This 177-nucleotide RNA was probed chemically with 2A3 and DMS.
[RMDB]
RNA sequence: GGGAACGACUCGAGUAGAGUCGAAAAUAGUCCCGUACUGCAGGCGAGUAUCGGACGCGUCAGCUCCAGAGUAUCGGGGGUUGGAUAUCCCUCGUGAAUAUUGCAGGCAUCGACUGCAAAGACUAAAUCCCAGGUUAGUUUUCGAACUAACCUGGGAAAAAGAAACAACAACAACAAC
Reactivity to 2A3 in 0.01 (KOAc 150mM, MgCl2 10mM, bicine 150mM(pH8.5), 24C), signal-to-noise 2, nucleotides 027 to 126: u060a000g060u000c000c000c000g000u090a070c010u000g060c020a030g040g000c030g020a030g020u080a050u090c040g020g040a010c050g030c000g120u020c080a050g000c020u000c000c030a010g000a060g150u080a040u110c000g080g010g000g000g010u070u040g180g010a060u120a100u150c010c000c000u010c020g010u000g050a070a020u050a040u140u030g030c000a000g050g000c000a140u170c180g150a130c010u000g000c060a050a000a000g110a000c050u050a080a000a060
Reactivity to DMS in 0.01 (KOAc 150mM, MgCl2 10mM, bicine 150mM(pH8.5), 24C), signal-to-noise 2, nucleotides 027 to 126: u030a070g000u000c000c000c020g020u020a100c110u010g000c060a090g020g000c070g020a060g000u000a050u000c250g010g030a050c180g030c060g000u000c120a050g000c020u000c020c060a140g000a190g000u000a040u000c030g000g000g020g000g050u000u000g000g000a120u010a080u020c030c000c000u000c010g000u050g000a060a190u040a030u000u010g000c000a020g000g000c100a150u030c130g000a030c010u000g000c000a040a040a160g010a110c080u010a070a080a180

The reactions ran in a buffer of 150 mM KOAc, 10 mM MgCl2 and 150 mM bicine (pH 8.5), at 24 C.